This 207-nucleotide RNA was probed chemically with DMS and 2A3. For 2A3 the reverse transcriptase was SuperScript II with manganese. The data come from the RNA Mapping Database (RMDB), library OK3TST. For DMS, 2,946 sequencing reads were counted. For 2A3, 675 sequencing reads were counted. The RNA was probed in 150 mM KOAc, 10 mM MgCl2 and 150 mM bicine (pH 8.5) at 24 C.

RNA sequence: GGGAACGACUCGAGUAGAGUCGAAAAAACAUUAUUCAAUCCAGAGCCAAAAAUGUCAUAGCUAGUUAGUUAGGGUUGUGUUUGUUCAUGUUUAGAAUCCUAGGAACGCUAUUUCUUGAUGGACCCUGGUCACCUUCCAACAUAAAGUAGCAACAUAACUGGAAAAUCAUUUCGAUGAUUUUCCAGUAAAAGAAACAACAACAACAAC
Reactivity to DMS in 0.01 (KOAc 150mM, MgCl2 10mM, bicine 150mM(pH8.5), 24C), signal-to-noise 2, nucleotides 027 to 156: a030a020c030a070u020u000a150u000u000c030a070a140u000c020c030a080g030a100g020c020c000a000a110a120a070a080u010g040u000c080a120u000a050g010c040u000a110g020u000u010a110g020u000u000a100g040g000g020u020u000g050u000g000u000u020u000g020u000u000c120a170u010g050u000u000u000a110g000a100a050u000c030c020u000a080g030g020a050a050c090g010c000u000a020u000u000u000c030u000u020g010a210u000g010g010a030c010c030c020u020g000g010u020c030a030c020c030u000u000c010c010a110a060c070a090u020a040a020a050g000u010a080g020c020a030a070c110a060u000a070
Reactivity to 2A3 in 0.01 (KOAc 150mM, MgCl2 10mM, bicine 150mM(pH8.5), 24C), signal-to-noise 2, nucleotides 027 to 156: a000a000c100a150u270u220a120u090u190c010a000a020u000c000c000a000g020a050g030c000c090a000a000a000a040a120u150g020u070c020a020u040a030g000c040u010a020g060u070u000a050g030u070u030a000g050g010g000u060u000g020u000g080u090u060u060g220u080u130c070a040u070g020u100u040u000a130g030a010a010u000c000c000u020a010g050g040a050a010c060g000c040u010a020u080u000u010c020u010u070g000a050u060g020g010a090c050c010c000u020g040g000u000c030a110c050c030u050u000c010c030a070a070c000a050u200a110a060a070g080u240a020g100c060a000a040c080a110u300a100